[RMDB]
Notes
The record gives the reactivity of an RNA of 177 nucleotides to DMS and 2A3. It was measured as part of the RMDB library OK1LIB. The 2A3 profile rests on 2,332 reads. For DMS, 3,553 sequencing reads were counted. High 2A3 reactivity points to a flexible backbone, as in loops and unpaired stretches. For DMS the reverse transcriptase was MarathonRT.
RNA sequence: GGGAACGACUCGAGUAGAGUCGAAAAGAAAGUGCUUAAACCGUGUGGACACGAAUGGCUAUAACCACAGAAACCUGAGGAAACAGGAAGCCACAACGCAAGCCAUGUGGUUAGCACACGGAAGAAAAAUAGUCCUAGUCUUCGGACUAGGACUAUUAAAAGAAACAACAACAACAAC
Reactivity to DMS in 0.01 (KOAc 150mM, MgCl2 10mM, bicine 150mM(pH8.5), 24C), signal-to-noise 3, nucleotides 027 to 126: g020a040a060a100g000u000g010c010u000u000a070a070a040c020c010g000u000g040u010g000g000a070c050a120c020g010a230a100u010g000g000c040u000a120u000a070a070c050c160a140c220a090g030a070a040a080c060c020u000g040a160g000g040a070a100a080c040a020g000g000a150a050g000c020c010a090c130a130a110c120g000c090a090a130g010c010c010a030u010g030u020g000g000u000u040a060g010c020a000c000a030c090g000g010a070a100g000a050a060a030
Reactivity to 2A3 in 0.01 (KOAc 150mM, MgCl2 10mM, bicine 150mM(pH8.5), 24C), signal-to-noise 3, nucleotides 027 to 126: g110a070a030a000g040u040g050c050u100u130a060a020a000c000c020g000u030g030u000g000g010a020c020a010c070g060a030a040u050g000g040c010u050a030u040a260a110c040c040a050c030a120g080a040a020a000c020c020u050g040a070g010g300a180a130a010c000a000g000g020a040a020g020c000c000a050c050a130a020c030g050c090a130a100g000c000c000a000u030g010u010g000g010u040u030a050g000c000a000c000a000c060g060g020a040a070g050a060a150a000